RNA sequence: GGGAACGACUCGAGUAGAGUCGAAAAUUUAAGAGGUAAUUUGGGAGAUUUAAUCUAUGAUAGUGAUAUAAAGGACACUUCAGCACCAAUCAAGGAUAAUACUUCAGUUGAUGCAAGUAUUAAGCCAGGAGAUACUAUACAUACUUGGUCAAAGAGAUCUAUUGCUCACAUUCGUGUGAGCAAUAGAAAAAGAAACAACAACAACAAC
Reactivity to 2A3 in 0.01 (KOAc 150mM, MgCl2 10mM, bicine 150mM(pH8.5), 24C), signal-to-noise 2, nucleotides 027 to 156: u080u070u050a160a020g020a000g020g000u020a040a080u010u040u160g010g060g000a100g000a030u070u130u120a120a050u030c060u080a060u070g030a050u080a040g020u010g000a020u030a020u100a240a110a010g090g010a010c010a000c040u020u080c060a050g000c030a050c050c000a040a030u070c070a070a020g020g010a020u020a120a000u010a070c020u000u010c020a050g080u100u050g070a100u070g030c020a020a000g000u030a050u040u060a070a000g020c020c030a000g020g000a030g010a010u020a050c070u040a030u010a090c040a080u040a060c050u050u060g010g000u080c030a040a110a000g120a010g020a010
Reactivity to DMS in 0.01 (KOAc 150mM, MgCl2 10mM, bicine 150mM(pH8.5), 24C), signal-to-noise 1, nucleotides 027 to 156: u000u000u040a110a030g000a050g000g020u000a030a090u000u010u000g000g000g020a160g020a200u010u040u010a050a110u000c020u000a070u000g020a120u000a060g030u040g000a120u000a080u000a040a040a110g050g000a110c030a070c060u000u020c040a130g050c050a100c000c020a020a030u000c050a080a050g000g050a200u000a080a080u000a050c060u020u020c010a030g000u000u010g040a030u000g020c050a030a100g000u000a030u000u000a050a100g010c020c060a120g030g000a060g010a120u000a050c020u000a090u020a040c030a050u000a080c060u040u000g020g020u000c020a120a140a120g000a040g020a160
Source information: Chemical mapping of a 207-nucleotide RNA with 2A3 and DMS. For DMS the reverse transcriptase was MarathonRT. Values cover nucleotides 27 to 156. It was measured as part of the RMDB library OK3TST.